Overview:
The data come from the RNA Mapping Database (RMDB), library OK1LIB. The record gives the reactivity of an RNA of 177 nucleotides to DMS and 2A3. The reactions ran in a buffer of 150 mM KOAc, 10 mM MgCl2 and 150 mM bicine (pH 8.5), at 24 C. 2A3 adducts were read by reverse transcription with SuperScript II with manganese. Values cover nucleotides 27 to 126. For DMS the reverse transcriptase was MarathonRT. For DMS, 3,059 sequencing reads were counted.
[RMDB]
RNA sequence: GGGAACGACUCGAGUAGAGUCGAAAAACACAAACAGCAUUUGGUUAUAUUGGAUUAGGUGUAUUAGCAAUUGCAAUUAUGAUGGGUAUAUUUACUGGUUUAAAUGGAUUCUUGAUGAGUUCAAGUCUGGAGCAUCAUUAUUCGUAAUGAUGCUCCAAAAAGAAACAACAACAACAAC
Reactivity to DMS in 0.01 (KOAc 150mM, MgCl2 10mM, bicine 150mM(pH8.5), 24C), signal-to-noise 1, nucleotides 027 to 126: a130c100a030c090a040a140a120c160a050g040c030a060u030u000u000g000g000u000u000a020u000a060u000u120g000g000a090u020u020a030g000g020u010g000u010a050u010u000a140g010c060a060a020u010u010g020c030a060a030u000u020a050u000g000a100u030g000g010g000u000a050u010a050u010u000u000a060c050u000g000g000u010u000u020a010a040a050u010g000g000a060u010u000c040u000u000g000a050u030g020a110g000u000u000c060a080a060g010u020c070
Reactivity to 2A3 in 0.01 (KOAc 150mM, MgCl2 10mM, bicine 150mM(pH8.5), 24C), signal-to-noise 1, nucleotides 027 to 126: a000c140a010c000a000a070a000c120a000g030c070a050u080u000u000g110g000u120u140a080u000a030u120u120g030g140a140u210u000a010g060g090u040g000u000a080u000u040a000g180c070a000a000u050u060g000c010a000a000u260u150a000u120g210a120u120g000g050g010u150a110u040a030u280u220u000a000c000u080g140g000u000u130u240a030a100a000u070g000g050a000u030u000c000u030u120g220a120u240g000a050g060u010u010c000a110a000g130u000c080